[RMDB]
This 177-nucleotide RNA was probed chemically with DMS and 2A3.
Reactivities are given for positions 27 through 126.
Conditions: 150 mM KOAc, 10 mM MgCl2 and 150 mM bicine (pH 8.5), 24 C.
For 2A3 the reverse transcriptase was SuperScript II with manganese.
It was measured as part of the RMDB library M2PK50.
RNA sequence: GGGAACGACUCGAGUAGAGUCGAAAAUCAAGCCGUUUCGACGGCUUGAACACUUUAGAGUCCUGAGGGACUAGGAUCCAGAGUACGGGAGGAACUCUAAGGCCUAGCCCUGCUUCGGCAGGGCUAACUGAGAAUUGUAUUUCGAUACAAUUCUCAGAAAAGAAACAACAACAACAAC
Reactivity to DMS in 0.01 (KOAc 150mM, MgCl2 10mM, bicine 150mM(pH8.5), 24C), signal-to-noise 2, nucleotides 027 to 126: u000c000a000a010g010c000c000g020u000u000u010c180g010a020c000g010g000c000u000u000g000a020a050c190a150c030u000u000u010a030g000a020g010u000c010c000u000g010a260g010g010g000a030c030u000a020g010g000a160u020c150c050a100g020a080g000u000a070c070g010g010g010a120g000g010a070a050c000u000c010u000a010a030g010g000c040c020u000a010g000c000c000c000u000g000c000u000u010c170g010g020c010a010g000g000g010c000u000a000a040
Reactivity to 2A3 in 0.01 (KOAc 150mM, MgCl2 10mM, bicine 150mM(pH8.5), 24C), signal-to-noise 6, nucleotides 027 to 126: u020c000a000a000g010c000c000g010u020u040u130c230g130a030c000g010g000c000u000u000g000a000a010c010a020c000u060u050u040a040g000a010g030u000c010c010u040g050a210g080g080g020a030c020u030a060g070g080a170u020c040c030a050g010a020g190u080a050c060g040g050g070a040g020g020a080a040c000u000c000u020a040a030g020g000c000c010u000a000g010c010c000c000u000g000c010u010u040c150g110g000c000a000g040g000g000c000u000a020a010